[RMDB]
RNA sequence: GGGAACGACUCGAGUAGAGUCGAAAAGUGUUGAAAAACUGACUGUGGAGAUGAGGCAUGGCUCCCAAGAAAUGAAGAUGUCAUCCUAACAGAAUUUGGAGGCUGUUUAAAUGUGCAGAAUCCUUGUAUUCCAAUGAGGUUUUCACCUCUGUGUGAACUUCCACUAUUACUUCGGUAAUAGUGGAAGAAAAGAAACAACAACAACAAC
Reactivity to DMS in 0.01 (KOAc 150mM, MgCl2 10mM, bicine 150mM(pH8.5), 24C), signal-to-noise 2, nucleotides 027 to 156: g040u010g000u000u000g000a070a080a080a130a090c050u020g010a100c050u010g020u000g010g020a100g030a050u000g000a130g030g000c050a090u010g020g030c020u010c050c000c010a080a100g000a020a080a100u010g020a070a060g010a070u010g030u000c020a070u000c040c070u000a140a300c070a080g010a040a180u000u000u020g000g000a030g020g010c020u000g010u000u000u010a040a070a130u010g020u010g000c020a120g000a060a160u000c000c010u040u000g000u000a090u000u000c040c060a030a120u000g000a050g000g040u000u000u010u000c140a110c000c000u010c040u020g010u000g030u000g000a070a250
Reactivity to 2A3 in 0.01 (KOAc 150mM, MgCl2 10mM, bicine 150mM(pH8.5), 24C), signal-to-noise 3, nucleotides 027 to 156: g060u050g010u030u060g080a080a050a030a030a020c030u060g080a020c040u080g030u060g060g030a050g030a110u110g020a050g020g000c040a020u030g030g010c010u050c000c030c010a030a020g080a050a080a030u110g020a050a040g020a010u090g040u070c040a060u030c020c010u060a080a050c010a020g110a200a080u130u130u160g020g000a000g010g010c010u000g020u000u100u070a050a090a040u130g010u030g000c010a000g000a040a020u010c000c000u080u050g060u080a130u100u040c010c040a060a070u150g000a050g040g000u020u060u120u130c030a010c000c010u050c080u050g060u010g010u020g050a030a050

Background:
Source: RMDB library OK3TST, as collected in RNAgym. Structure probing data (DMS and 2A3) for a 207-nucleotide construct. For DMS the reverse transcriptase was MarathonRT. For 2A3, 1,492 sequencing reads were counted. The reactions ran in a buffer of 150 mM KOAc, 10 mM MgCl2 and 150 mM bicine (pH 8.5), at 24 C. Reactivities are given for positions 27 through 156.